[RMDB]
RNA sequence: GGGAACGACUCGAGUAGAGUCGAAAACUUUGGUGAAGCCCUAUCUAGUAUAGCAAUCCACCAAGCAGGUGAUUUCACACAAUUCAGGUUAUCAUAGAAAAUGCGCCCUGACUUGACAGGUAUGGUCCCGAUCGGGAUAUUUCGAUAUCCCGAUCGGAAAAGAAACAACAACAACAAC
Reactivity to DMS in 0.01 (KOAc 150mM, MgCl2 10mM, bicine 150mM(pH8.5), 24C), signal-to-noise 1, nucleotides 027 to 126: c090u000u000u000g000g000u000g050a060a000g020c160c300c000u000a000u030c000u050a140g090u060a070u000a010g030c060a000a300u000c090c020a040c020c000a030a080g000c070a100g000g030u000g000a190u000u000u000c040a010c000a090c100a010a030u070u000c040a060g020g010u000u000a010u020c020a050u000a010g030a120a060a090a080u000g000c110g000c200c000c010u020g000a000c120u070u010g000a080c200a010g000g000u000a050u000g000g000u000c020
Reactivity to 2A3 in 0.01 (KOAc 150mM, MgCl2 10mM, bicine 150mM(pH8.5), 24C), signal-to-noise 2, nucleotides 027 to 126: c010u030u000u070g040g000u050g040a110a000g050c010c060c000u000a000u000c060u010a010g150u140a020u010a010g000c000a000a060u000c010c000a000c000c040a010a060g040c030a040g090g000u030g020a190u010u000u110c060a050c000a020c020a080a040u100u040c040a040g010g010u080u140a110u070c060a070u060a150g170a100a120a020a070u150g040c000g000c000c030c010u020g030a070c010u020u040g020a020c000a030g000g080u090a130u090g090g000u010c000
An RNA of 177 nucleotides, treated with DMS and 2A3 and read out base by base. For DMS, 1,076 sequencing reads were counted. Reactivities are rounded to 0.1 and cut off at 0 and 3. The data come from the RNA Mapping Database (RMDB), library OK1LIB.